RNA sequence: GGGAACGACUCGAGUAGAGUCGAAAAAAUGUCUUUGAUUGUGCUUACGCUGACGCCGUAAAUCCUAGACUGCUUUACUGCGCCAAGUGGGCUAUCUCGAAUCGCUCUAAUCUGACUCUCAUGCAGCUUUGCCUGUCCAUUGGUAGAGCCAAGGGCAGGUAGCAGGUCUAUUCGUAGACCUGCUACCAAAAGAAACAACAACAACAAC
Reactivity to DMS in 0.01 (KOAc 150mM, MgCl2 10mM, bicine 150mM(pH8.5), 24C), signal-to-noise 1, nucleotides 027 to 156: a030a030u000g000u000c070u020u000u000g010a150u000u000g070u000g000c070u000u000a030c040g010c070u000g010a080c020g000c060c060g010u000a090a070a080u000c030c030u000a200g010a130c140u000g000c090u000u000u000a050c050u020g020c020g000c000c030a090a100g000u010g020g010g020c030u000a060u000c050u010c000g010a060a030u000c050g000c000u000c010u000a070a130u020c040u000g000a060c020u000c000u000c040a060u010g000c060a090g010c020u000u000u000g000c030c010u020g020u010c030c100a250u000u000g040g000u000a070g000a110g020c000c020a020a050g010g040g030c020a060
Reactivity to 2A3 in 0.01 (KOAc 150mM, MgCl2 10mM, bicine 150mM(pH8.5), 24C), signal-to-noise 3, nucleotides 027 to 156: a000a000u250g020u030c080u070u080u080g050a090u100u100g070u070g090c030u060u040a030c040g040c110u030g030a000c000g010c030c000g010u010a000a000a050u000c000c000u030a100g080a270c060u070g050c000u000u010u030a020c010u010g000c000g000c010c010a070a020g040u030g000g010g000c000u020a050u050c050u020c020g070a090a040u040c050g010c030u000c040u040a070a210u050c090u080g050a090c000u020c000u010c060a010u110g060c040a010g000c040u120u190u200g010c010c000u020g020u120c030c030a300u040u030g030g020u050a070g060a020g080c000c020a000a010g000g010g000c010a020